[RMDB]
RNA sequence: GGGAACGACUCGAGUAGAGUCGAAAAGCCGUGCUCGAGAGGGAGCAGAAAAUGCAGAGCUAUCCCGUCGUUUCGCUAAACAAAUGCGAAACGACAAUUUGCGUUACAUACGCAAUCCUCUAAUGAACGAUCAGGAUACCUUCGGGUAUCCUGAUCGAAAAGAAACAACAACAACAAC
Reactivity to DMS in 0.01 (KOAc 150mM, MgCl2 10mM, bicine 150mM(pH8.5), 24C), signal-to-noise 2, nucleotides 027 to 126: g010c050c080g040u000g030c000u010c000g050a030g000a050g000g000g020a040g010c040a050g010a070a050a090a070u000g020c050a060g000a140g030c030u030a120u010c000c010c040g040u000c000g000u000u000u010c020g030c000u000a080a150a140c300a020a020a090u000g000c010g000a000a000a010c000g020a010c010a060a040u000u000u050g000c030g000u000u000a080c300a110u020a020c040g000c030a020a050u000c010c000u000c020u000a120a080u000g010a060a150
Reactivity to 2A3 in 0.01 (KOAc 150mM, MgCl2 10mM, bicine 150mM(pH8.5), 24C), signal-to-noise 2, nucleotides 027 to 126: g000c000c030g110u070g040c000u000c000g110a060g010a020g020g010g000a030g000c030a000g120a010a190a030a030u300g020c040a020g070a040g060c010u020a040u040c000c010c000g000u000c000g000u000u000u000c000g000c010u030a150a250a160c050a070a070a040u100g000c000g010a000a000a000c020g030a000c000a000a040u010u000u020g010c000g000u010u060a170c070a090u270a030c080g010c010a020a030u040c000c010u050c010u070a110a190u090g040a090a020